[RMDB]
RNA sequence: GGGAACGACUCGAGUAGAGUCGAAAAUGUGUGCUCGAGAGCCUCCCUGUCCGACAGAGCUUUUAGAUCUUCUGAUCUUUCCCUGGAGGAUAUCGCUUAUGGUUCAAGCGAUUCUCGGAAUAAUUAAGUCGAGUGUGAUAUUCGUAUCACACUCGACAAAAGAAACAACAACAACAAC
Reactivity to DMS in 0.01 (KOAc 150mM, MgCl2 10mM, bicine 150mM(pH8.5), 24C), signal-to-noise 1, nucleotides 027 to 126: u020g000u000g040u000g000c040u000c040g020a070g020a240g000c040c050u000c000c000c010u010g030u000c030c020g000a210c120a160g000a090g000c250u010u000u010u000a030g000a030u000c000u000u000c300u000g010a020u000c000u000u000u000c010c000c000u000g020g000a120g010g020a080u010a040u000c000g010c000u000u000a130u020g000g010u000u000c130a020a000g000c000g000a000u000u000c020u000c000g040g030a180a110u010a060a160u000u030a110a170
Reactivity to 2A3 in 0.01 (KOAc 150mM, MgCl2 10mM, bicine 150mM(pH8.5), 24C), signal-to-noise 1, nucleotides 027 to 126: u190g050u000g020u050g070c000u000c050g080a090g000a010g020c000c000u030c010c020c020u070g100u000c020c010g000a020c030a010g040a000g110c000u030u040u030u070a010g000a020u020c040u270u020c130u300g000a010u040c000u010u030u000c030c010c000u010g090g000a020g020g010a010u010a010u060c000g000c000u110u010a060u210g290g010u170u130c070a000a000g020c010g020a040u050u010c020u000c030g040g050a070a070u150a060a100u230u100a140a060